[RMDB]
RNA sequence: GGGAACGACUCGAGUAGAGUCGAAAAGAUAUGGAAUGACAGGGAGAAAGCAUUCGGAAACGAAUGCAAUUUCUUUGAUCUGUCCGCUUCCUAAGUCAAAACUGUCACUCGUUCGCGAGUGACAGAACAUGUGCAACCUGUUCGCAGGUUGCACAUGAAAAGAAACAACAACAACAAC
Reactivity to DMS in 0.01 (KOAc 150mM, MgCl2 10mM, bicine 150mM(pH8.5), 24C), signal-to-noise 2, nucleotides 027 to 126: g010a010u000a040u000g000g010a000a030u000g010a030c000a010g000g040g030a000g010a010a040a140g010c000a010u000u000c000g010g060a030a010a050c020g000a000a000u000g000c000a040a000u000u000u000c000u000u010u020g020a020u000c000u000g000u000c030c300g030c300u000u020c000c000u000a000a130g000u010c000a090a060a060a070c010u000g020u000c000a000c000u000c000g020u020u020c220g020c020g020a010g040u000g020a000c000a000g000a110a110